[RMDB]
RNA sequence: GGGAACGACUCGAGUAGAGUCGAAAACUGCACCUCAAUGUGCUGGUAUCAUUCAUACUGAUUUUGAACGUGGAUUUAUCCGUGCCGAAGUAACAAGUUAUGAUGACUAUGUACAAUAUGGCGGCGACCAAUACGCAUAUUUCGAUAUGCGUAUUGGAAAAGAAACAACAACAACAAC
Reactivity to DMS in 0.01 (KOAc 150mM, MgCl2 10mM, bicine 150mM(pH8.5), 24C), signal-to-noise 6, nucleotides 027 to 126: c060u020g020c040a190c020c010u030c190a090a080u000g010u010g010c000u020g000g000u000a080u010c050a030u030u010c030a020u000a030c040u020g010a070u010u000u010u000g010a070a170c070g030u010g000g010a100u010u030u020a080u000c010c020g010u000g010c070c010g000a030a020g010u010a060a090c110a060a030g010u010u010a010u000g000a060u010g000a010c020u000a030u040g020u000a020c020a020a050u010a110u020g000g000c070g000g020c030g010a180
Reactivity to 2A3 in 0.01 (KOAc 150mM, MgCl2 10mM, bicine 150mM(pH8.5), 24C), signal-to-noise 9, nucleotides 027 to 126: c040u070g010c020a030c010c010u080c060a060a080u050g010u020g000c020u020g020g010u060a080u130c020a050u120u110c010a010u030a050c010u030g080a110u050u020u050u080g070a090a020c030g040u100g030g030a070u070u140u160a120u130c000c020g010u050g060c050c010g040a050a010g030u100a130a130c100a130a020g040u150u050a050u070g040a020u050g020a010c010u030a040u300g020u010a010c020a050a060u090a060u200g060g030c080g020g000c000g020a010
Structure probing data (DMS and 2A3) for a 177-nucleotide construct.
Reactivities are given for positions 27 through 126.
For DMS the reverse transcriptase was MarathonRT.
2A3 adducts were read by reverse transcription with SuperScript II with manganese.